[RMDB]
RNA sequence: GGGAACGACUCGAGUAGAGUCGAAAAGCCCAUAUGUUCGCAUAUGGGCAAAAGCAGUUCUGAGCAUGCGAGCUCUCUGCGACAAAAGUCAACGCAAUAAAAAAACACGUCACUUCGGUGACGUGAACAAAUGAUCUUCGUUCGCGAAGAUCAUUUGAAAAGAAACAACAACAACAAC
Reactivity to DMS in 0.01 (KOAc 150mM, MgCl2 10mM, bicine 150mM(pH8.5), 24C), signal-to-noise 3, nucleotides 027 to 126: g010c000c000c000a000u010a010u000g020u010u000c210g010c000a010u000a000u000g020g030g020c010a020a010a040a090g000c010a040g010u040u000c130u010g000a020g010c020a100u000g020c070g000a160g000c000u010c010u000c000u000g000c000g020a110c160a050a090a100a070g000u010c120a050a110c040g010c090a080a120u040a020a000a040a050a100a110a130c010a000c000g000u000c000a020c000u000u020c180g040g010u000g000a000c000g010u000g000a030a060
Reactivity to 2A3 in 0.01 (KOAc 150mM, MgCl2 10mM, bicine 150mM(pH8.5), 24C), signal-to-noise 3, nucleotides 027 to 126: g000c010c000c000a000u000a000u000g020u000u060c250g000c070a000u010a000u010g010g000g000c020a030a020a010a040g000c010a010g010u190u080c060u130g010a010g030c020a050u120g070c040g090a030g010c010u000c010u000c000u000g000c000g030a040c090a020a190a020a010g100u130c050a080a060c040g000c050a070a070u190a220a120a010a000a010a010a020c010a000c000g000u000c000a010c010u030u070c180g050g000u010g000a000c000g000u010g000a000a010